[RMDB]
RNA sequence: GGGAACGACUCGAGUAGAGUCGAAAACCGGUUUAACAAUCAAUCGAUCUUCGCGGGUUGCUCGUUGGCAGACAGCGCGAGAAAUCCGUUGUUUCUGUCCGAUGCGGCAAUGUAAUCUGGUCAUGUGACCUCGCCUUGACCGCCAUUAGGGGAGAUUAUGCUUCCUAAUGUUCGCAUUAGGAAGCAUAAAAGAAACAACAACAACAAC
Reactivity to 2A3 in 0.01 (KOAc 150mM, MgCl2 10mM, bicine 150mM(pH8.5), 24C), signal-to-noise 1, nucleotides 027 to 156: c010c000g020g030u100u170u090a170a130c070a080a100u300c040a030a000u180c040g120a090u050c000u040u040c150g000c000g000g080g000u030u000g070c050u060c030g080u120u300g170g000c010a030g070a300c070a010g050c020g000c020g000a000g000a010a030a000u040c030c080g000u040u090g000u030u010u010c000u010g190u060c000c010g020a000u020g010c000g030g000c000a040a060u000g030u040a030a100u090c080u090g000g040u010c010a200u300g210u300g120a010c010c010u010c000g060c000c000u090u010g020a300c000c000g030c070c030a010u010u070a160g000g000g000g000a040g000a000u000u040
The record gives the reactivity of an RNA of 207 nucleotides to 2A3. Source: RMDB library ARCHII, as collected in RNAgym. The reactions ran in a buffer of 150 mM KOAc, 10 mM MgCl2 and 150 mM bicine (pH 8.5), at 24 C. For 2A3, 412 sequencing reads were counted. Values are in units of 0.01, from 0 to 300, in steps of 10. Reactivities are given for positions 27 through 156.